Source: RMDB library OK1LIB, as collected in RNAgym.
This 177-nucleotide RNA was probed chemically with 2A3.
Values cover nucleotides 27 to 126.
For 2A3, 720 sequencing reads were counted.

RNA sequence: GGGAACGACUCGAGUAGAGUCGAAAAACUCUCCGAAAGAACUACCCAAGUCUCCGCGACGUCUACCCCUUGCACCAGCGGCAAUUCUGGACUCGCACGAUUUUGCUUCUGUAGCAAACGGCGGUAAGUCCCUCACGUCUUUCGAGACGUGAGGGACAAAAGAAACAACAACAACAAC
Reactivity to 2A3 in 0.01 (KOAc 150mM, MgCl2 10mM, bicine 150mM(pH8.5), 24C), signal-to-noise 2, nucleotides 027 to 126: a000c060u040c010u000c030c030g030a080a080a070g040a040a020c100u080a110c020c010c030a000a050g020u000c020u000c000c000g050c030g010a070c010g040u000c000u040a140c000c000c000c040u030u030g010c000a030c000c000a010g040c000g030g030c020a030a050u130u060c050u030g140g090a110c020u020c070g000c040a230c060g100a140u140u030u000u010g020c060u060u040c060u270g170u090a010g000c000a020a020a020c020g030g000c000g020g000u070a050a010